[RMDB]
RNA sequence: GGGAACGACUCGAGUAGAGUCGAAAAGAUAUGGAUCCAUAAGGGAGCUCGUCGGAAACGACCGUGAGCGAAGAACUUAAUGGAUCCUAAGUCAAAAGCAUCGAGAAUGUUCGCAUUCUCGAUGCAAUCAGUCUUAACUCUUCGGAGUUAAGACUGAAAAAGAAACAACAACAACAAC
Reactivity to DMS in 0.01 (KOAc 150mM, MgCl2 10mM, bicine 150mM(pH8.5), 24C), signal-to-noise 3, nucleotides 027 to 126: g000a030u010a300u000g010g010a000u000c000c000a020u000a030a020g000g000g000a090g010c000u000c020g010u000c000g020g000a090a110a190c150g030a050c020c300g020u000g000a000g040c000g000a070a100g000a150a150c000u000u000a030a050u000g020g000a020u000c000c000u000a030a060g010u000c060a130a070a110a110g000c010a010u000c000g010a020g010a020a000u000g010u000u030c240g000c000a010u000u000c000u000c000g000a000u000g000c000a010a030
Reactivity to 2A3 in 0.01 (KOAc 150mM, MgCl2 10mM, bicine 150mM(pH8.5), 24C), signal-to-noise 3, nucleotides 027 to 126: g040a000u050a030u200g000g000a000u000c000c000a010u000a020a020g030g010g000a050g030c000u000c000g200u040c010g100g040a150a210a180c110g140a110c090c100g220u110g030a000g000c030g010a070a040g020a000a010c020u050u090a170a080u190g000g000a000u000c000c000u000a020a030g050u020c040a000a030a050a170g000c000a010u000c010g000a000g000a010a000u030g040u130u190c260g020c140a000u000u010c000u000c000g000a000u000g010c010a010a010